Chemical mapping of a 177-nucleotide RNA with 2A3 and DMS. DMS adducts were read by reverse transcription with MarathonRT. Source: RMDB library OK1LIB, as collected in RNAgym. The 2A3 profile rests on 201,764 reads.

RNA sequence: GGGAACGACUCGAGUAGAGUCGAAAAGAUGAUAGCAACACAAUUUCUCAAUUGUGGACGACAGAAUUGAGAAAUUCUAGUGUCUGUAUAGACACUGAAGUGUAAGCACUUCGUCGUCGCUAUCAUACAUAGGUUAGUGAUUCGUUGCUGAUCUAUGAAAAGAAACAACAACAACAAC
Reactivity to 2A3 in 0.01 (KOAc 150mM, MgCl2 10mM, bicine 150mM(pH8.5), 24C), signal-to-noise 9, nucleotides 027 to 126: g130a010u010g000a000u000a000g000c000a010a030c000a000c000a010a010u020u110u090c200u100c080a020a010u010u010g010u000g010g000a000c010g000a000c010a010g030a010a010u030u070g040a070g040a100a050a000u000u000c000u000a000g000u000g000u000c000u000g150u070a120u130a180g000a000c000a000c000u000g000a000a000g000u010g010u090a090a080g120c000a000c000u000u000c000g000u000c000g000u000c000g000c000u000a000u000c000a000u010a010
Reactivity to DMS in 0.01 (KOAc 150mM, MgCl2 10mM, bicine 150mM(pH8.5), 24C), signal-to-noise 9, nucleotides 027 to 126: g010a040u000g000a000u000a000g050c000a090a070c010a010c000a010a000u000u010u040c190u030c220a040a020u000u000g000u000g000g010a020c010g000a020c000a010g000a010a000u000u000g000a210g000a090a010a010u000u000c010u000a010g010u000g000u000c000u000g010u040a060u060a010g010a010c000a000c000u000g010a000a010g010u000g010u020a130a170g020c020a010c000u000u000c000g010u000c000g010u000c010g030c000u000a000u000c000a010u000a100